[RMDB]
Structure probing data (DMS and 2A3) for a 177-nucleotide construct. For 2A3 the reverse transcriptase was SuperScript II with manganese. The DMS profile rests on 2,275 reads. Values cover nucleotides 27 to 126. DMS adducts were read by reverse transcription with MarathonRT. The data come from the RNA Mapping Database (RMDB), library M2PK90. For 2A3, 1,406 sequencing reads were counted.
RNA sequence: GGGAACGACUCGAGUAGAGUCGAAAAAUACAGCGUAAUCGAGCGGAGGAAAACGGCACUCCGAAAAUCCGGUACGAUUAUGAUCCCACUGCGUGGACGCUAGAUGCAGAACCGGAUUGCCGAGGAAUGCUUAAAAAUCUUUCGAGAUUUUUAAGCAAAAAGAAACAACAACAACAAC
Reactivity to DMS in 0.01 (KOAc 150mM, MgCl2 10mM, bicine 150mM(pH8.5), 24C), signal-to-noise 3, nucleotides 027 to 126: a100u010a110c150a040g010c020g000u000a040a050u000c020g010a230g010c030g000g010a040g000g010a040a050a070a130c050g000g000c040a070c080u010c010c000g000a060a060a060a040u000c010c000g000g020u010a120c070g010a040u000u000a050u010g000a170u000c000c000c010a220c100u010g000c100g030u000g000g000a080c090g000c050u000a070g020a060u000g020c030a040g010a130a040c060c010g000g010a010u000u000g000c040c020g020a150g000g010a080a110
Reactivity to 2A3 in 0.01 (KOAc 150mM, MgCl2 10mM, bicine 150mM(pH8.5), 24C), signal-to-noise 2, nucleotides 027 to 126: a000u090a040c040a040g060c010g000u040a040a090u110c080g050a020g150c010g020g000a010g020g050a030a230a020a070c000g000g000c000a000c030u010c020c000g010a040a060a010a000u000c000c000g090g040u080a030c070g000a020u050u130a020u210g090a030u070c000c000c000a020c070u130g010c030g040u110g080g080a020c010g000c080u040a030g020a160u150g030c020a020g050a130a010c020c000g000g000a000u020u020g010c010c010g000a020g020g080a220a020